[RMDB]
RNA sequence: GGGAACGACUCGAGUAGAGUCGAAAAGUCUCCUGGACGCUUCCGCCCGCUCGGGAUGGGCCUCAGUGCCGACGAGGAGUCCGCAGGUGGGAGGAUCAGCCACCGGAGAGGGACGCGAUGGUAAGAGCUUAUGAACCCAGUUCGCUGGGUUCAUAAGAAAAGAAACAACAACAACAAC
Reactivity to DMS in 0.01 (KOAc 150mM, MgCl2 10mM, bicine 150mM(pH8.5), 24C), signal-to-noise 2, nucleotides 027 to 126: g000u010c010u000c010c040u010g020g030a120c210g010c050u000u000c030c040g000c000c010c000g010c020u000c110g000g000g030a040u000g000g010g000c030c010u000c060a120g010u010g020c110c130g010a110c110g000a070g010g010a300g030u010c000c030g000c030a070g000g020u000g000g010g010a090g000g000a030u010c160a090g010c000c190a240c070c040g000g020a080g020a100g010g000g000a060c030g030c100g020a080u010g030g010u010a080a100g010a150g010
Reactivity to 2A3 in 0.01 (KOAc 150mM, MgCl2 10mM, bicine 150mM(pH8.5), 24C), signal-to-noise 1, nucleotides 027 to 126: g030u000c000u020c030c040u050g030g020a030c020g020c020u020u000c000c000g010c010c000c010g020c030u020c050g060g020g050a040u050g030g080g030c000c020u120c050a070g050u060g160c050c010g090a060c010g000a020g050g040a010g050u000c060c020g000c050a020g050g030u040g070g030g030a040g010g000a050u060c070a010g030c000c040a010c010c000g030g000a050g010a020g020g000g010a000c030g040c020g060a050u060g010g000u060a090a010g020a060g120